An RNA of 177 nucleotides, treated with 2A3 and read out base by base. It was measured as part of the RMDB library OK1LIB.
RNA sequence: GGGAACGACUCGAGUAGAGUCGAAAAGAUUUUCCAAAAUCAGAGCCCACAUAGAUUUACUCGAAACGGACACAUGGCAUGGUAAUAAAUUUACCAUCUGCUUUCGAGGGCGUGUCCAAAGCAGUUCUCCCAUCCUAGGCUUCGGCCUAGGAUGGGAAAAAGAAACAACAACAACAAC
Reactivity to 2A3 in 0.01 (KOAc 150mM, MgCl2 10mM, bicine 150mM(pH8.5), 24C), signal-to-noise 1, nucleotides 027 to 126: g140a000u040u000u000u250c170c040a000a000a120a000u030c000a000g050a000g190c000c100c000a080c000a000u090a000g120a300u160u300u180a000c000u000c090g010a300a000a000c100g000g030a000c000a000c000a100u040g000g000c000a000u000g050g020u000a000a000u050a040a250a060u190u000u010a000c000c000a000u000c160u160g130c050u160u070u120c050g180a140g000g000g000c000g000u000g000u000c000c000a030a030a000g000c010a000g000u000u130c000